Chemical mapping of a 207-nucleotide RNA with DMS and 2A3. As a SHAPE reagent, 2A3 marks flexible, mostly unpaired nucleotides at the ribose 2'-OH.
[RMDB]
RNA sequence: GGGAACGACUCGAGUAGAGUCGAAAACUGCUCCUCCUGCAUCUCCAGCAGGUGGCGGCCCACGUCGUCCAGACUUCGCACGGCCUUGCCCAUCACGAGCGCCGUGACCAGGUUGGCCCCGUUCAGGACCAUCUCGCCGUACGUCACCGGCACGUCGGACUAACCGUAUAUUCGUAUACGGUUAGUCAAAAGAAACAACAACAACAAC
Reactivity to DMS in 0.01 (KOAc 150mM, MgCl2 10mM, bicine 150mM(pH8.5), 24C), signal-to-noise 2, nucleotides 027 to 156: c040u000g000c050u020c030c020u000c020c000u000g000c040a110u010c090u010c120c070a230g030c000a050g010g000u000g000g030c050g000g030c000c020c040a110c170g020u000c040g000u000c030c020a100g000a050c040u000u010c020g060c000a060c000g030g000c040c030u030u010g010c010c030c170a230u010c160a130c030g040a140g020c080g060c010c020g050u010g010a070c050c000a060g030g020u010u000g010g050c000c010c010c040g060u000u000c170a090g040g000a050c000c000a000u000c050u010c040g040c080c020g010u010a040c040g000u000c030a090c050c060g020g040c030a050c030g010u010c030g000
Reactivity to 2A3 in 0.01 (KOAc 150mM, MgCl2 10mM, bicine 150mM(pH8.5), 24C), signal-to-noise 5, nucleotides 027 to 156: c030u030g000c010u030c010c010u000c000c000u000g000c000a160u050c070u060c160c040a030g000c000a010g020g000u010g020g000c030g000g020c000c010c020a070c030g060u060c020g030u020c030c030a040g010a090c000u040u030c080g000c030a010c020g040g000c010c000u020u060g040c050c040c030a140u110c040a020c080g020a020g040c090g000c030c010g010u010g040a110c020c040a040g000g030u030u030g040g000c040c050c000c010g050u100u130c080a080g040g040a030c020c010a070u060c060u070c110g030c030c020g060u090a070c060g050u020c020a040c120c020g020g000c030a020c040g110u090c040g050